[RMDB]
RNA sequence: GGGAACGACUCGAGUAGAGUCGAAAACCUGGUUUCCUCUGAUGUCCAGUCCCUCCCCCAUCCGAGAGAAGGGGGACUCCGGAACACCUUCCAUCCGAGGGACGAAGCCGCCACCGGGCGCUCCCCUCGGACUUCCUCCGGGGAGGUUCACAUCCCCCAUUAUAACGAACUUCGGUUCGUUAUAAUGAAAAGAAACAACAACAACAAC
Reactivity to DMS in 0.01 (KOAc 150mM, MgCl2 10mM, bicine 150mM(pH8.5), 24C), signal-to-noise 1, nucleotides 027 to 156: c070c020u020g000g020u000u010u000c040c050u030c050u030g010a060u010g020u030c020c020a190g050u030c030c010c000u010c020c030c030c040c030a170u000c080c070g030a170g020a140g000a140a150g020g030g020g050g010a010c040u010c060c020g020g010a100a110c120a090c040c030u000u000c110c000a250u000c020c030g000a040g000g000g040a190c080g020a060a300g010c040c040g020c040c070a220c140c100g010g000g030c030g000c010u010c000c000c000c000u000c010g000g030a000c010u010u000c070c030u000c020c010g050g010g000g000a060g030g020u010u000c070a160c070a220u000c020c010c020c040
Reactivity to 2A3 in 0.01 (KOAc 150mM, MgCl2 10mM, bicine 150mM(pH8.5), 24C), signal-to-noise 2, nucleotides 027 to 156: c000c000u000g020g000u030u090u080c050c060u170c150u170g060a090u090g040u050c040c010a010g040u040c010c000c010u040c000c000c010c010c000a030u050c020c040g190a160g000a020g020a170a160g020g000g000g000g000a020c020u040c030c000g000g030a060a040c020a120c080c020u150u030c030c000a020u000c010c000g000a010g010g000g030a040c070g050a040a020g110c220c120g020c050c050a180c230c100g240g080g000c000g000c000u010c000c020c000c010u000c000g000g000a000c000u080u020c010c050u080c020c000g040g000g010g000a010g060g000u120u180c080a060c020a180u040c000c010c000c000